[RMDB]
RNA sequence: GGGAACGACUCGAGUAGAGUCGAAAAUUUGGGAACUUGAAAGAGUGGAGAGCUGUUAAGUCUACUGUAGAAAGGUGGUCAUCUGCUAACUGGACCGAAUGUAGAGAAGCCAGACAUUCAUACAACAGUAGUGCAGAAUACAGAGCUGCUUUGAUGCCUCGGGUUCAUAAUUCGUUAUGAACCCGAGAAAAGAAACAACAACAACAAC
Reactivity to 2A3 in 0.01 (KOAc 150mM, MgCl2 10mM, bicine 150mM(pH8.5), 24C), signal-to-noise 1, nucleotides 027 to 156: u050u040u040g020g000g020a000a080c030u030u020g030a080a130a040g020a060g070u050g000g040a070g000a000g060c000u010g020u000u120a060a060g010u000c030u030a100c050u080g000u090a030g160a060a110a050g030g040u070g000g080u090c020a020u010c020u010g000c000u020a110a120c020u050g050g020a100c000c100g060a050a000u050g000u010a000g030a000g000a160a000g070c040c080a000g060a140c000a000u010u040c020a020u020a230c000a070a000c060a020g010u070a010g000u030g000c000a000g000a020a030u180a140c140a050g000a000g040c060u090g000c030u000u040u220g090a110u190g030c000
This 207-nucleotide RNA was probed chemically with 2A3. It was measured as part of the RMDB library OK3TST.